RNA sequence: GGGAACGACUCGAGUAGAGUCGAAAAACGAGUCGUACGCGACUCUAAUGGUAUUGUCGGCGUAAAAGAACAAGACGUCACCGGACGCGACCGGGCUAAAAAGCGAAACGUCAUCUACGGAUGACGAAAAACGGACCUGGGUUCGCCCAGGUCCGAAGUACUUAUAUUGGUUCGCCAAUAUAAGUACAAAAGAAACAACAACAACAAC
Reactivity to DMS in 0.01 (KOAc 150mM, MgCl2 10mM, bicine 150mM(pH8.5), 24C), signal-to-noise 1, nucleotides 027 to 156: a080c060g020a020g000u010c010g020u000a120c110g040c010g020a050c000u000c020u020a080a060u010g030g020u000a060u000u000g020u010c040g010g050c000g040u000a090a070a090a140g020a040a140c120a130a140g010a110c010g000u000c040a150c080c000g050g010a110c090g000c110g020a160c010c010g030g010g000c100u000a020a050a070a070a080g010c030g050a100a040a110c020g000u000c000a000u000c000u020a110c290g050g040a000u000g000a020c000g000a000a010a060a080a080c080g010g000a050c020c030u000g000g010g020u010u000c300g000c000c010c010a040g000g080u010c030c000g060a000a070
Reactivity to 2A3 in 0.01 (KOAc 150mM, MgCl2 10mM, bicine 150mM(pH8.5), 24C), signal-to-noise 2, nucleotides 027 to 156: a000c050g000a000g000u010c000g040u040a030c190g000c000g100a000c000u000c010u010a130a100u110g090g020u150a160u120u180g110u070c060g010g010c020g030u050a070a070a110a080g140a080a050c060a080a060g080a040c030g010u000c010a010c030c000g000g020a020c000g010c000g020a000c010c000g000g010g030c020u040a000a000a000a000a010g000c030g030a130a030a020c010g000u000c000a000u000c000u020a000c160g110g000a000u010g010a000c000g030a070a030a000a000a000c010g000g000a000c010c010u040g060g000g000u070u040c110g120c000c000c000a000g000g000u010c000c000g000a000a000
Conditions: 150 mM KOAc, 10 mM MgCl2 and 150 mM bicine (pH 8.5), 24 C. Chemical mapping of a 207-nucleotide RNA with DMS and 2A3. The DMS profile rests on 1,810 reads.